[RMDB]
RNA sequence: GGGAACGACUCGAGUAGAGUCGAAAAUACCUUGAGUAUUGCUGGAUUCAGUUUAGCGUGCAUGCUCUUGGCUAUUCUCAUAGUGAUUGUCAAAUUUGGAGUUACUUAUUCGUCAAUUCAAUAUUUAAAAAGGUGCCGAUGUUCGCAUCGGCACCAACACUUAAACUCGCUUCGGCGAGUUUAAGUGAAAAGAAACAACAACAACAAC
Reactivity to 2A3 in 0.01 (KOAc 150mM, MgCl2 10mM, bicine 150mM(pH8.5), 24C), signal-to-noise 1, nucleotides 027 to 156: u140a000c000c000u010u010g000a000g000u030a000u200u190g000c050u010g020g040a120u190u090c090a180g130u120u130u240a090g030c090g030u050g020c000a000u060g000c000u000c010u050u000g010g000c000u090a100u060u030c090u000c050a070u060a020g170u110g030a020u040u060g020u060c050a020a040a110u170u000u070g100g000a190g080u100u110a090c010u010u060a010u040u010c010g010u000c010a040a040u180u000c030a080a040u080a230u090u280u240a090a100a030a030a030g000g000u000g020c000c000g010a020u000g010u060u040c090g000c090a000u010c010g000g000c000a000c000c000a000a000